[RMDB]
RNA sequence: GGGAACGACUCGAGUAGAGUCGAAAAAGCGUUCAGGUAACCCCUUUACGUGAUGCAUUUGUCCACUCUUGCACAGAAUGGAAUCAUGUUAAACUUACAGUGCAAGAAAGUAAGUUAACCCAUUUAAAGCAGGUGACUAGUUCGCUAGUCACCUGCUAAAAGAAACAACAACAACAAC
Reactivity to 2A3 in 0.01 (KOAc 150mM, MgCl2 10mM, bicine 150mM(pH8.5), 24C), signal-to-noise 1, nucleotides 027 to 126: a000g000c000g000u070u000c030a000g010g000u000a000a000c000c010c010c000u000u000u000a000c010g000u110g040a140u070g130c120a170u000u000u270g130u000c000c060a060c000u000c000u000u270g020c000a020c000a110g060a020a000u040g000g060a040a040u000c060a030u300g130u130u290a030a030a030c000u040u000a000c000a180g140u050g150c030a000a060g140a200a000a000g090u100a000a000g000u030u040a070a100c000c000c230a110u000u000u000a240a300